The record gives the reactivity of an RNA of 207 nucleotides to 2A3.
[RMDB]
RNA sequence: GGGAACGACUCGAGUAGAGUCGAAAACACGAGCUGUACCUGAGUUCCUUUGACGAGGAAUUUCAGUGGGAAGUGGAGUCGUGGCGCCUGCAUCUCGUGCUGUACUACGUCGUGGUGGUCGGCCUGGCCCUCUUCUGCCUCGAUGGUGGUCAUGCUGACCCACAGUUUGAUUCGUCAAACUGUGGGUAAAAGAAACAACAACAACAAC
Reactivity to 2A3 in 0.01 (KOAc 150mM, MgCl2 10mM, bicine 150mM(pH8.5), 24C), signal-to-noise 2, nucleotides 027 to 156: c060a010c040g020a000g040c050u060g030u180a060c000c000u030g010a020g020u020u020c030c000u080u060u150g160a110c100g000a010g000g080a030a020u190u230u050c010a000g000u150g030g000g040a060a000g080u080g070g030a030g000u030c060g010u050g020g000c040g060c030c050u070g000c030a060u050c060u010c050g030u060g020c030u060g000u060a030c030u020a020c040g040u030c020g020u040g030g000u030g010g000u040c030g040g020c030c110u100g040g030c000c000c000u050c010u020u000c010u050g000c010c010u020c040g010a020u020g080g100u020g000g030u040c040a060u110g030c050u040g060
Background:
The data come from the RNA Mapping Database (RMDB), library OK3TST. Values cover nucleotides 27 to 156.